[RMDB]
Chemical mapping of a 207-nucleotide RNA with 2A3.

RNA sequence: GGGAACGACUCGAGUAGAGUCGAAAAGAAAGAAAGAAAGAACUCUGUAAAGUGAGGGAUAGCCUGGACCAGGUCGGCGGGCCUGCUCCAGUUUCCUUCGCUCUGCUCAACGGGCAGACCGCCACAAAAAACGCGUGGCUGUUCGCAGCCACGCGAACUGUACUGUAUUGUUCGCAAUACAGUACAGAAAAGAAACAACAACAACAAC
Reactivity to 2A3 in 0.01 (KOAc 150mM, MgCl2 10mM, bicine 150mM(pH8.5), 24C), signal-to-noise 2, nucleotides 027 to 156: g050a020a060a010g060a050a100a010g070a020a140a030g050a070a030c040u070c060u110g090u200a110a070a080g000u020g010a000g040g000g000a040u080a050g060c010c000u010g010g000a010c020c000a000g000g000u020c040g000g040c000g010g020g000c010c000u000g000c000u000c010c010a000g000u040u060u010c000c000u030u040c060g000c010u030c010u000g010c000u010c080a150a030c140g000g010g020c000a010g030a100c010c010g010c030c010a040c050a040a130a030a040a010a030c010g020c010g000u000g020g000c020u010g020u020u060c190g000c060a000g000c000c000a000c000g000c010g000a000a000
Conditions: 150 mM KOAc, 10 mM MgCl2 and 150 mM bicine (pH 8.5), 24 C.